[RMDB]
RNA sequence: GGGAACGACUCGAGUAGAGUCGAAAACAGUGACAUUGCGAAAGCAAGGCUGGCGGUAGGUAGUCCUGGGCGGCGACAGCCUUGGACUGCGGCGUAAAGGUGUACCUGGGGCCGUUAAACCUAUCGUGAAAGGCAACUUGGUUCGCCAAGUUGCCAACGAUCAUAAUGAGUUCGCUCAUUAUGAUCGAAAAGAAACAACAACAACAAC
Reactivity to 2A3 in 0.01 (KOAc 150mM, MgCl2 10mM, bicine 150mM(pH8.5), 24C), signal-to-noise 6, nucleotides 027 to 156: c010a000g020u040g140a060c110a300u010u010g010c020g050a130a030a010g000c010a010a010g020g000c000u010g010g000c000g010g000u000a000g010g010u010a000g000u000c000c010u020g010g000g000c020g030g060c090g100a060c110a060g000c000c000u000u010g010g000a010c000u000g000c000g000g000c010g020u060a050a040a000g070g010u200g070u290a200c010c000u050g010g000g130g000c000c000g010u030u110a050a150a020c000c000u000a000u010c000g010u010g060a090a050a010g000g000c010a000a000c000u000u010g020g010u040u030c100g010c080c000a000a000g000u000u000g000c000c000a000a000
Reactivity to DMS in 0.01 (KOAc 150mM, MgCl2 10mM, bicine 150mM(pH8.5), 24C), signal-to-noise 3, nucleotides 027 to 156: c030a030g030u000g010a100c040a300u000u000g000c010g000a160a130a230g040c000a030a070g010g020c030u000g010g010c010g000g000u000a020g010g010u010a060g010u000c010c000u000g000g010g020c030g040g030c080g010a140c200a170g000c010c010u000u000g030g010a010c000u020g000c010g010g000c040g040u010a080a200a070g000g010u010g020u000a090c050c000u010g000g010g030g000c010c000g030u000u000a040a090a130c010c000u000a030u000c020g000u000g000a040a090a130g010g000c010a010a010c000u010u020g000g010u000u010c300g010c000c000a010a070g020u000u000g020c020c020a010a020
An RNA of 207 nucleotides, treated with 2A3 and DMS and read out base by base. Conditions: 150 mM KOAc, 10 mM MgCl2 and 150 mM bicine (pH 8.5), 24 C. Source: RMDB library M2RFPK, as collected in RNAgym.